Structure probing data (DMS and 2A3) for a 177-nucleotide construct. For DMS the reverse transcriptase was MarathonRT. The data come from the RNA Mapping Database (RMDB), library OK2TST. 2A3 adducts were read by reverse transcription with SuperScript II with manganese. DMS (dimethyl sulfate) methylates the pairing face of unpaired adenines and cytosines. For 2A3, 1,904 sequencing reads were counted. Values are in units of 0.01, from 0 to 300, in steps of 10. High 2A3 reactivity points to a flexible backbone, as in loops and unpaired stretches.
RNA sequence: GGGAACGACUCGAGUAGAGUCGAAAAAGAACUUGGAUGUUACAUUCCGUCGUGAUCCUAAUACCUUGAGACCACGUAUCAACAAGUUCGACAGUCAAAUGGAUCAAGAGCAAAAGAAUGCAGGAAAUAAAAUUAAUACGUUCGCGUAUUAAUUUUAAAAAGAAACAACAACAACAAC
Reactivity to DMS in 0.01 (KOAc 150mM, MgCl2 10mM, bicine 150mM(pH8.5), 24C), signal-to-noise 4, nucleotides 027 to 126: a120g000a030a020c020u000u010g000g020a110u000g010u000u000a060c060a100u000u010c050c060g010u000c030g020u000g010a030u000c010c020u010a100a110u010a130c210c140u000u000g010a140g020a050c030c020a040c120g020u000a070u010c080a050a080c030a030a030g000u000u000c010g020a100c160a120g010u000c090a030a060a090u000g000g000a050u000c040a040a070g010a070g030c070a050a060a100a110g000a050a020u000g010c070a070g010g010a060a080a160
Reactivity to 2A3 in 0.01 (KOAc 150mM, MgCl2 10mM, bicine 150mM(pH8.5), 24C), signal-to-noise 2, nucleotides 027 to 126: a010g010a020a010c010u040u040g000g020a070u120g130u140u090a060c030a080u090u060c050c010g010u040c000g050u010g020a040u030c000c010u050a130a040u080a120c020c050u050u070g070a030g000a070c000c060a030c070g040u050a070u130c020a020a100c000a080a000g010u010u050c030g010a010c040a000g070u080c020a080a050a100u110g020g000a020u000c010a010a010g020a010g030c030a060a030a050a030g060a110a000u040g000c020a020g070g070a050a090a030